[RMDB]
RNA sequence: GGGAACGACUCGAGUAGAGUCGAAAACGGCAUGAUACCACCGUUAUCGGGUCAACAGAGUAGUUGCAAAUGACAACAAUGCUCAGGGUUAUGCUCUCGCUGCCUAAUGGCGGUGCGGGUAACCCACAAAAGAUAUUGAUCUUCGGAUCAAUAUCAACAUUACGUGCCGGUUCGCCGGCACGUAAUGAAAAGAAACAACAACAACAAC
Reactivity to 2A3 in 0.01 (KOAc 150mM, MgCl2 10mM, bicine 150mM(pH8.5), 24C), signal-to-noise 3, nucleotides 027 to 156: c020g000g000c040a030u140g010a000u030a030c010c000a000c000c030g230u070u030a010u050c030g000g000g010u010c000a000a030c050a040g020a000g000u070a010g010u010u000g020c040a050a210a300u250g090a170c010a000a010c020a040a130u120g000c000u010c100a070g020g000g000u000u090a110u250g040c040u030c010u010c000g000c000u010g000c000c010u260a300a160u240g000g000c000g000g000u020g000c020g000g000g000u000a020a030c010c040c010a050c020a010a060a010a010g000a000u000a000u000u010g000a000u000c010u040u080c250g070g000a000u000c000a000a000u000a000u000c000a000a020